[RMDB]
This 207-nucleotide RNA was probed chemically with DMS and 2A3. It was measured as part of the RMDB library OK3TST. Reactivities are given for positions 27 through 156. DMS (dimethyl sulfate) methylates the pairing face of unpaired adenines and cytosines.
RNA sequence: GGGAACGACUCGAGUAGAGUCGAAAAUGGACUCAAAAGUCUCAGCACAGUCGCCGCCCUGAAGCAAAAACGCCCUACCGUUUGCUACAUCAGCUAGGUGUUGCUUGAGCUCGCGUACCUCUGGAGCAACGACGAUUGGCGGUACAGAUUCAAGAAACCCAUUUUAGUAGUUCGCUACUAAAAUGGGAAAAGAAACAACAACAACAAC
Reactivity to DMS in 0.01 (KOAc 150mM, MgCl2 10mM, bicine 150mM(pH8.5), 24C), signal-to-noise 2, nucleotides 027 to 156: u000g000g020a080c040u000c030a060a080a110a210g000u000c010u000c090a070g030c090a090c060a090g000u000c040g020c030c020g000c020c010c010u010g020a060a080g050c060a030a050a080a070a090c030g000c040c050c090u010a140c070c010g000u010u000u000g010c000u010a070c040a110u000c030a030g010c110u010a060g000g060u000g040u010u000g010c030u000u000g010a090g020c070u000c040g020c060g010u000a080c020c010u000c010u000g040g000a100g050c030a020a070c050g000a020c020g000a080u000u000g000g040c050g040g010u000a060c030a070g000a180u000u000c090a060a120g020a080a050a250
Reactivity to 2A3 in 0.01 (KOAc 150mM, MgCl2 10mM, bicine 150mM(pH8.5), 24C), signal-to-noise 3, nucleotides 027 to 156: u090g010g000a010c020u010c120a070a040a060a160g030u030c030u040c050a050g040c070a050c020a030g060u070c030g020c020c010g020c000c000c000u020g050a060a000g030c010a040a050a030a070a020c000g030c030c020c010u060a100c050c000g010u010u060u150g030c010u060a090c000a210u160c020a030g070c080u130a050g000g040u010g050u070u170g000c000u030u070g040a020g030c060u070c060g060c040g000u040a030c000c010u020c020u040g050g010a020g000c010a010a070c010g120a010c050g130a190u050u070g010g030c000g010g000u030a020c010a020g060a030u080u130c040a010a080g150a230a040a080